[RMDB]
Structure probing data (2A3) for a 207-nucleotide construct.
Values cover nucleotides 27 to 156.
The 2A3 profile rests on 431 reads.
Source: RMDB library M2RFPK, as collected in RNAgym.
The RNA was probed in 150 mM KOAc, 10 mM MgCl2 and 150 mM bicine (pH 8.5) at 24 C.
RNA sequence: GGGAACGACUCGAGUAGAGUCGAAAAAGGCACUUCGCAAUGUGUGCUCAAACAUUGCUUAUUCAAACACGCUUCACAAUGUGCGACAAAGAAACAUUGUUAUAAGAGCUAUUGUUUUAACAUUGGCAAAACCGAGUUAGCUUCGGCUAACUCGGAACGUUGCUCCGUAGUUCGCUACGGAGCAACGAAAAGAAACAACAACAACAAC
Reactivity to 2A3 in 0.01 (KOAc 150mM, MgCl2 10mM, bicine 150mM(pH8.5), 24C), signal-to-noise 1, nucleotides 027 to 156: a000g220g010c020a050c000u000u020c060g000c000a000a000u000g010u000g000u000g060c130u090c140a020a020a000c000a000u000u000g000c040u080u220a230u190u100c120a140a050a000c040a010c130g000c000u000u000c000a000c000a000a020u000g000u020g030c010g080a050c140a170a110a000g030a020a030a000c000a020u000u010g020u070u000a190u090a120a100g140a000g060c000u000a030u120u040g060u000u160u000u080a070a000c000a020u020u090g030g010c050a020a020a020a020c010c000g000a000g000u000u000a000g000c010u010u010c200g000g130c060u000a000a000c060u000c000g000g000a000a010